This 177-nucleotide RNA was probed chemically with 2A3.
2A3 adducts were read by reverse transcription with SuperScript II with manganese.
RNA sequence: GGGAACGACUCGAGUAGAGUCGAAAAUUGCCAUUGGGAUCCUUGCCGCACCGCAUAAAACACACAGACCAUUUUUUGGGAACCGCUGAGGGUCACCGCGCUGGGAACUGUGGGACGAACAGGUAGCGAGCGUCGAUCAUUUCGAUGAUCGACGCUCAAAAGAAACAACAACAACAAC
Reactivity to 2A3 in 0.01 (KOAc 150mM, MgCl2 10mM, bicine 150mM(pH8.5), 24C), signal-to-noise 1, nucleotides 027 to 126: u010u040g040c000c000a000u000u220g210g000g000a040u040c040c070u020u000g000c000c000g000c080a030c000c000g000c020a000u260a110a080a130a000c010a000c050a000c050a020g040a140c000c000a120u050u050u030u000u050u210g140g000g050a020a000c030c000g210c070u040g100a230g000g000g000u000c100a000c080c000g040c000g000c040u040g000g000g070a140a000c000u000g000u010g100g060g100a000c000g000a040a040c000a100g090g090u070a130g070c050
Reactivities are given for positions 27 through 126. The data come from the RNA Mapping Database (RMDB), library OK1LIB.